[RMDB]
RNA sequence: GGGAACGACUCGAGUAGAGUCGAAAAUAAAAGAGCGUACGACUCACAAAGACUGUACGACAGUCUGACUCACUCGUACGCUUGUUCAACGAGAGAGAGAGUGCGUUGGAACAAGUGUGAAAAAAAAGUAUCAGGUAGGAUUCGUCCUACCUGAUACAAAAGAAACAACAACAACAAC
Reactivity to DMS in 0.01 (KOAc 150mM, MgCl2 10mM, bicine 150mM(pH8.5), 24C), signal-to-noise 5, nucleotides 027 to 126: u010a080a070a130a130g000a030g010c010g020u000a010c030g000a040c040u010c180a100c090a070a160a010g010a010c000u000g010u000a110c290g000a150c070a010g000u000c000u000g010a250c100u000c060a050c210u000c030g010u010a010c010g000c000u000u000g000u000u000c070a040a040c070g010a040g000a130g010a050g010a060g000a080g030u010g000c030g010u000u000g010g010a030a050c060a030a060g000u010g020u020g000a000a000a000a050a030a080a070a180
Reactivity to 2A3 in 0.01 (KOAc 150mM, MgCl2 10mM, bicine 150mM(pH8.5), 24C), signal-to-noise 4, nucleotides 027 to 126: u180a020a100a030a040g020a010g020c030g000u050a020c040g060a060c010u020c050a050c030a020a090a010g010a010c000u030g030u180a090c130g140a110c170a000g010u010c000u010g010a030c010u010c080a020c010u010c020g030u040a010c000g000c000u000u010g000u010u020c000a010a010c030g010a010g000a010g000a000g000a000g000a010g140u140g070c020g000u020u030g090g010a030a020c010a040a050g060u050g030u080g130a130a040a010a010a010a020a000a030
Source: RMDB library M2PK90, as collected in RNAgym. Structure probing data (DMS and 2A3) for a 177-nucleotide construct. The DMS profile rests on 4,350 reads. The reactions ran in a buffer of 150 mM KOAc, 10 mM MgCl2 and 150 mM bicine (pH 8.5), at 24 C. For 2A3, 6,573 sequencing reads were counted.